[RMDB]
RNA sequence: GGGAACGACUCGAGUAGAGUCGAAAAGUUGUUUAUAGUAACAAAACAAAUUUUGCUCGAAGUACUGUGACAGUACCUAGUCCUUACCGUUACAAGUACAUUAAUAUUCAUUUCCCAUAAAAACCAACAAGAAACAUUAAUUCGUUAAUGUUUCUUGAAAAGAAACAACAACAACAAC
Reactivity to 2A3 in 0.01 (KOAc 150mM, MgCl2 10mM, bicine 150mM(pH8.5), 24C), signal-to-noise 6, nucleotides 027 to 126: g020u000u020g010u030u030u030a240u080a140g170u120a100a040c040a050a100a010a010c060a030a140a060u100u130u090u080g080c030u060c070g090a080a020g000u010a000c000u000g000u020g030a000c010a010g000u010a010c010c030u050a040g060u070c000c000u010u010a000c000c010g000u000u000a000c050a140a020g020u010a010c020a020u080u170a140a080u110a150u100u060c020a020u030u030u010c010c000c020a020u120a050a120a020a030a030c060c040a020a050
Reactivity to DMS in 0.01 (KOAc 150mM, MgCl2 10mM, bicine 150mM(pH8.5), 24C), signal-to-noise 6, nucleotides 027 to 126: g010u000u000g000u000u000u010a070u020a190g020u020a070a080c090a040a030a040a110c090a050a080a070u010u000u010u000g020c170u010c070g010a090a110g000u000a010c010u000g010u000g000a010c020a020g010u000a020c110c070u000a110g010u020c130c120u000u000a020c010c040g000u010u010a010c020a040a060g010u000a000c010a090u000u030a060a080u020a080u020u000c040a090u010u000u000c000c000c000a140u050a050a060a050a060a080c180c140a040a160

Description:
This 177-nucleotide RNA was probed chemically with 2A3 and DMS. Values cover nucleotides 27 to 126. DMS adducts were read by reverse transcription with MarathonRT. 2A3 adducts were read by reverse transcription with SuperScript II with manganese.